Source: RMDB library 15KREP, as collected in RNAgym. Structure probing data (2A3 and DMS) for a 177-nucleotide construct. 2A3 adducts were read by reverse transcription with SuperScript II with manganese. As a SHAPE reagent, 2A3 marks flexible, mostly unpaired nucleotides at the ribose 2'-OH. The RNA was probed in 150 mM KOAc, 10 mM MgCl2 and 150 mM bicine (pH 8.5) at 24 C. Reactivities are given for positions 27 through 126.
[RMDB]
RNA sequence: GGGAACGACUCGAGUAGAGUCGAAAAGCAACAUUCCGAGGGGACCGUCCCUCGGUAAUGGCGAAUGGGACCCAGAACUCUCUCUAGAUUCCCAGAGAGAAUCGAGAGAAAACUGGCUCUCCCUUAGGCUAUAUUAUUUGUUCGCAAAUAAUAUAGCAAAAGAAACAACAACAACAAC
Reactivity to 2A3 in 0.01 (KOAc 150mM, MgCl2 10mM, bicine 150mM(pH8.5), 24C), signal-to-noise 4, nucleotides 027 to 126: g020c010a000a110c000a030u010u000c010c000g000a010g030g020g030g070a170c060c060g300u280c020c000c000u000c000g000g000u000a000a000u010g010g010c020g060a050a050u090g000g000g010a010c030c020c010a010g010a050a040c020u000c000u000c000u010c020u050a070g000a020u010u010c000c030c150a070g060a010g000a000g000a140a000u010c010g000a000g000a000g000a010a010a010a030c000u000g000g000c010u000c000u000c000c000c000u010u040a080g030
Reactivity to DMS in 0.01 (KOAc 150mM, MgCl2 10mM, bicine 150mM(pH8.5), 24C), signal-to-noise 6, nucleotides 027 to 126: g020c050a100a200c040a020u000u000c000c000g010a040g000g010g010g010a140c300c300g010u010c000c000c010u000c000g000g000u010a000a010u000g010g000c130g010a140a100u010g000g010g000a020c210c000c000a020g010a090a250c200u000c010u000c000u000c010u010a160g020a060u000u000c010c010c100a210g000a160g000a170g010a010a000u000c010g010a030g000a010g000a010a020a100a180c010u000g000g000c030u000c050u000c000c010c000u000u000a070g010